This 177-nucleotide RNA was probed chemically with DMS and 2A3. As a SHAPE reagent, 2A3 marks flexible, mostly unpaired nucleotides at the ribose 2'-OH.

RNA sequence: GGGAACGACUCGAGUAGAGUCGAAAAUAAGGCAGCAACCAACACGGCCAAACCACGUUGACGCCGUUUGACGUAUUUACUUUCCAUUCGCAUCGAUGUGAGCCUUUCGUUUCAGGUCGCUACUGACGAUGUCGUGGGCAUUCGUGCCCACGACAUCAAAAGAAACAACAACAACAAC
Reactivity to DMS in 0.01 (KOAc 150mM, MgCl2 10mM, bicine 150mM(pH8.5), 24C), signal-to-noise 1, nucleotides 027 to 126: u020a140a140g010g000c000a050g030c040a220a170c140c070a040a050c100a030c080g020g010c020c070a040a040a030c180c120a050c080g020u000u010g020a040c060g010c030c010g010u000u000u000g000a010c160g010u000a080u000u010u000a040c110u040u010u000c040c010a080u000u000c080g020c080a090u010c040g010a020u010g010u000g010a140g020c020c040u000u000u000c060g030u000u000u000c010a030g000g010u000c030g010c030u050a060c100u000g000a150c070
Reactivity to 2A3 in 0.01 (KOAc 150mM, MgCl2 10mM, bicine 150mM(pH8.5), 24C), signal-to-noise 1, nucleotides 027 to 126: u180a020a040g070g000c020a000g010c050a030a010c040c000a030a020c090a020c080g030g000c020c020a080a000a000c040c020a090c090g000u000u050g010a000c050g020c050c030g000u070u040u040g110a030c020g050u060a100u040u160u090a080c040u120u060u000c040c010a060u000u080c070g000c020a020u030c010g100a070u090g050u050g040a030g000c000c000u050u040u090c120g000u020u020u080c000a010g020g010u050c040g020c070u060a030c010u060g050a020c010
Conditions: 150 mM KOAc, 10 mM MgCl2 and 150 mM bicine (pH 8.5), 24 C.